This 177-nucleotide RNA was probed chemically with 2A3 and DMS.
Reactivities are given for positions 27 through 126.
Values are in units of 0.01, from 0 to 300, in steps of 10.
For DMS the reverse transcriptase was MarathonRT.
The DMS profile rests on 1,716 reads.
The RNA was probed in 150 mM KOAc, 10 mM MgCl2 and 150 mM bicine (pH 8.5) at 24 C.
RNA sequence: GGGAACGACUCGAGUAGAGUCGAAAAAAUUAGUCAAAUCCAUUCUGGUUCUGGAUAUAUUGCUUAAUUCUUCCUAGAGGAACCCCACCAGCCGAAGCCACAUAAUAGGAACUAGACCAGAAGACAGUGACUUAUCAGUAUUCGUACUGAUAAGUCAAAAAGAAACAACAACAACAAC
Reactivity to 2A3 in 0.01 (KOAc 150mM, MgCl2 10mM, bicine 150mM(pH8.5), 24C), signal-to-noise 1, nucleotides 027 to 126: a000a010u170u060a030g030u060c040a100a060a080u010c040c000a020u010u010c020u000g000g030u180u080c020u020g020g000a010u000a010u030a030u140u110g000c070u080u030a090a060u160u000c040u000u080c040c030u090a110g040a120g070g060a190a230c020c020c000c010a030c020c020a000g020c000c000g120a000a000g040c010c000a020c010a010u150a130a020u030a190g120g030a060a000c010u020a000g000a010c020c000a010g040a040a000g030a070c040a020g120
Reactivity to DMS in 0.01 (KOAc 150mM, MgCl2 10mM, bicine 150mM(pH8.5), 24C), signal-to-noise 3, nucleotides 027 to 126: a050a030u010u000a030g020u010c020a030a030a090u000c000c000a140u000u000c010u010g000g000u000u000c020u000g000g010a040u000a090u000a300u010u010g020c020u010u000a030a030u000u000c020u000u000c000c020u000a130g010a120g000g000a070a100c110c060c020c030a090c080c040a060g010c020c020g000a050a100g020c020c020a060c080a060u000a090a100u010a050g020g000a060a030c060u010a050g000a040c040c020a070g020a040a090g000a090c160a100g000